[RMDB]
RNA sequence: GGGAACGACUCGAGUAGAGUCGAAAAGGAGGUGACAGAGCCAGCCACGUUGCAUUGGCCGUGCAUCGCGCAAUGAGAUUGCGAACUGAUGGCUUUGCCACAGUCCGCGGCCGUCGUGACACGUGGCCAGCACGCACCACGAGCGGUCGCAGCAAGCCUUCCGUCUAGUGUUCGCACUAGACGGAAGAAAAGAAACAACAACAACAAC
Reactivity to 2A3 in 0.01 (KOAc 150mM, MgCl2 10mM, bicine 150mM(pH8.5), 24C), signal-to-noise 2, nucleotides 027 to 156: g080g020a090g050g000u020g010a050c020a070g070a030g080c030c040a010g040c070c040a080c030g060u100u160g010c000a030u060u160g040g020c020c020g020u040g010c030a110u080c090g030c000g010c020a010a070u200g040a080g050a260u100u050g000c000g040a080a030c030u070g030a210u050g120g000c000u110u050u270g010c030c000a000c020a000g050u000c010c010g000c000g000g000c020c000g020u090c060g000u000g010a060c000a010c110g010u000g000g050c040c000a010g000c050a000c020g000c010a010c030c040a030c020g020a050g050c050g010g010u020c060g000c080a020g050c000a010a060g030c000

Chemical mapping of a 207-nucleotide RNA with 2A3. The 2A3 profile rests on 1,454 reads. The data come from the RNA Mapping Database (RMDB), library OK3TST. The RNA was probed in 150 mM KOAc, 10 mM MgCl2 and 150 mM bicine (pH 8.5) at 24 C.